[RMDB]
RNA sequence: GGGAACGACUCGAGUAGAGUCGAAAAGACCGCGACGAGGCGCUCCGAUGAACCUGCACUACCUGGUCGAGAUUCUCUACAUCAUCUCCUUUUCACUCUUCAUCUACGGGUUGAUGGGGCUCACCGGAAAUAGGCGACGCUUCGGCGUCGCCUAUUUAAAAGAAACAACAACAACAAC
Reactivity to 2A3 in 0.01 (KOAc 150mM, MgCl2 10mM, bicine 150mM(pH8.5), 24C), signal-to-noise 1, nucleotides 027 to 126: g060a010c020c010g070c100g010a090c060g020a100g060g010c020g000c030u070c000c000g010a030u080g010a010a030c020c020u150g000c030a000c040u060a030c020c000u020g090g070u140c050g010a030g000a150u150u000c070u000c020u120a210c010a110u050c010a030u030c120u070c000c030u080u050u050u090c080a000c030u060c000u150u090c040a210u000c090u080a060c060g120g010g000u000u050g100a090u010g000g000g050g000c000u000c010a000c000c000g080g000